[RMDB]
RNA sequence: GGGAACGACUCGAGUAGAGUCGAAAAACGCGUGUUAAGCGAUGCCACAAUCCAACAAGUGACAGUGGAUAAUCAGAGAAUACCGCAGGCCGCUACCCGGGCUUCAGCUCAAGCCAAGGUUGAAGCGCUGGAUAAUUACCUUCGGGUAAUUAUCCAGAAAAGAAACAACAACAACAAC
Reactivity to DMS in 0.01 (KOAc 150mM, MgCl2 10mM, bicine 150mM(pH8.5), 24C), signal-to-noise 2, nucleotides 027 to 126: a070c210g000c020g030u000g010u000u020a200a160g010c050g040a060u000g000c010c010a040c050a150a090u000c030c030a090a080c210a100a130g050u010g030a040c130a080g030u000g000g000a060u000a020a020u000c150a090g000a150g010a090a060u010a050c070c040g000c030a100g000g000c020c060g000c050u000a160c020c010c030g040g010g010c010u000u020c010a010g020c060u000c160a050a140g030c110c060a070a100g030g030u010u000g000a000a030g010c010g000